An RNA of 207 nucleotides, treated with 2A3 and read out base by base. The reactions ran in a buffer of 150 mM KOAc, 10 mM MgCl2 and 150 mM bicine (pH 8.5), at 24 C.
[RMDB]
RNA sequence: GGGAACGACUCGAGUAGAGUCGAAAAGACGUGGAGGUGUCGCGCCCUCCUUUGCGCGUAAGUACGUCGAAAUUCGGUGCUGUGGAUCGCACCGUUUGAUCCAUUAGAUAUCCGCUUUGUGCCGCGGUUGGGCAUUUACACUUACCCGAAAGGGGAACACCGCUGGAUUAUUCGUAAUCCAGCGGUGAAAAGAAACAACAACAACAAC
Reactivity to 2A3 in 0.01 (KOAc 150mM, MgCl2 10mM, bicine 150mM(pH8.5), 24C), signal-to-noise 1, nucleotides 027 to 156: g030a010c060g010u030g000g030a040g010g000u020g010u120c030g040c010g020c040c000c020u100c010c060u040u000u140g110c090g000c020g000u050a050a070g050u030a020c010g030u030c050g030a110a030a000u060u080c000g000g000u000g000c020u080g110u140g120g000a100u080c010g000c050a070c060c010g000u000u030u050g010a020u080c020c020a030u230u260a010g050a150u060a070u120c000c010g000c000u040u110u080g060u120g010c090c000g010c050g090g000u060u080g070g000g010c000a050u090u070u020a100c160a080c070u000u070a080c000c000c000g010a010a010a000g000g000g010g010a010a000